[RMDB]
RNA sequence: GGGAACGACUCGAGUAGAGUCGAAAAUCAUACUGGAUAGUAGAUAUUGGGAGUCACGGUCUCUACUAUCUAGUAUGAGCACUACUGGUAGACUAGACUGUGAUUCCCAAUGUCUAUCAGUGGUGUAGUAUCUGGAAGUAUUCGUACUUUCAGAUACAAAAGAAACAACAACAACAAC
Reactivity to DMS in 0.01 (KOAc 150mM, MgCl2 10mM, bicine 150mM(pH8.5), 24C), signal-to-noise 7, nucleotides 027 to 126: u030c040a060u030a020c000u000g000g020a110u040a130g010u000a000g000a010u000a010u000u000g010g010g000a020g000u010c010a020c000g000g000u000c000u000c110u010a120c000u000a000u010c060u020a000g010u000a010u020g020a120g020c180a070c120u000a010c050u010g000g000u000a000g000a210c240u010a030g010a020c020u010g010u000g000a020u000u000c000c000c000a000a000u000g010u000c000u000a000u010c010a010g000u000g010g010u010g010u010a130
Reactivity to 2A3 in 0.01 (KOAc 150mM, MgCl2 10mM, bicine 150mM(pH8.5), 24C), signal-to-noise 9, nucleotides 027 to 126: u090c010a010u020a050c000u020g050g040a090u070a150g040u010a000g030a010u010a010u010u010g020g000g010a030g050u050c020a010c040g010g010u000c010u020c020u090a270c000u000a020u020c010u010a000g000u000a010u040g010a010g020c040a020c040u010a000c000u000g000g000u010a010g040a140c130u010a020g010a030c010u050g030u030g030a050u020u000c000c010c000a000a020u010g000u000c000u000a000u010c000a000g000u030g020g030u070g030u070a070
This 177-nucleotide RNA was probed chemically with DMS and 2A3. For DMS the reverse transcriptase was MarathonRT. The DMS profile rests on 35,623 reads. Conditions: 150 mM KOAc, 10 mM MgCl2 and 150 mM bicine (pH 8.5), 24 C.